Annotation
An RNA of 177 nucleotides, treated with DMS and read out base by base. For DMS the reverse transcriptase was MarathonRT. Values cover nucleotides 27 to 126.
RNA sequence: GGGAACGACUCGAGUAGAGUCGAAAAGAGCGCGCGGACCCGGCCGAUCCCGCGAGGCGAGGUCGGAUGGUGGUGGUGGCCGUGAUGGUGCGGCGUGCGGGUCAUUGCGGGGGCGGUGUAGCGGAUGGGUUGAUUACAGGUUCGCCUGUAAUCAACCAAAAGAAACAACAACAACAAC
Reactivity to DMS in 0.01 (KOAc 150mM, MgCl2 10mM, bicine 150mM(pH8.5), 24C), signal-to-noise 1, nucleotides 027 to 126: g000a210g000c070g000c130g020c020g000g020a200c020c000c040g060g010c000c000g000a040u000c020c010c000g010c050g000a090g010g010c050g010a120g030g020u020c000g000g000a070u030g010g000u020g010g030u020g000g030u020g010g000c020c010g010u000g000a160u010g000g020u000g020c020g000g000c020g010u000g020c050g010g000g010u030c020a050u020u040g000c060g000g000g000g000g000c000g020g000u020g000u020a060g000c050g010g010a150u030g000